[RMDB]
RNA sequence: GGGAACGACUCGAGUAGAGUCGAAAAUGCUGUCGUUGACAGCGCCCAACGCUUCACAACCUGAAAGAAGCGCCUGUUAUCAGGACGGUUGAUCCAUCUACCGGUGCAGACCUCUGCAAACACCGGGUUUAACAAGCAUCUUUCGAGAUGCUUGUAACUGCACUAACCGAUUCGUCGGUUAGUGCAGAAAAGAAACAACAACAACAAC
Reactivity to 2A3 in 0.01 (KOAc 150mM, MgCl2 10mM, bicine 150mM(pH8.5), 24C), signal-to-noise 1, nucleotides 027 to 156: u180g000c000u020g020u010c030g300u170u270g000a000c000a000g030c000g040c050c000c000a030a060c000g010c000u010u000c010a000c000a100a010c000c030u140g000a000a050a020g000a000a000g010c000g060c030c000u180g020u180u150a240u300c000a000g010g000a000c010g010g010u000u010g060a070u100c040c020a010u090c060u130a030c010c000g060g000u050g000c000a010g160a300c000c070u220c030u110g050c090a070a040a040c070a010c010c000g020g020g000u000u130u040a110a000c000a000a010g030c000a000u010c000u040u080u130c180g090a000g000a000u000g000c000u010u000g020u000a000a030

Source: RMDB library M2RFPK, as collected in RNAgym. An RNA of 207 nucleotides, treated with 2A3 and read out base by base. 2A3 adducts were read by reverse transcription with SuperScript II with manganese.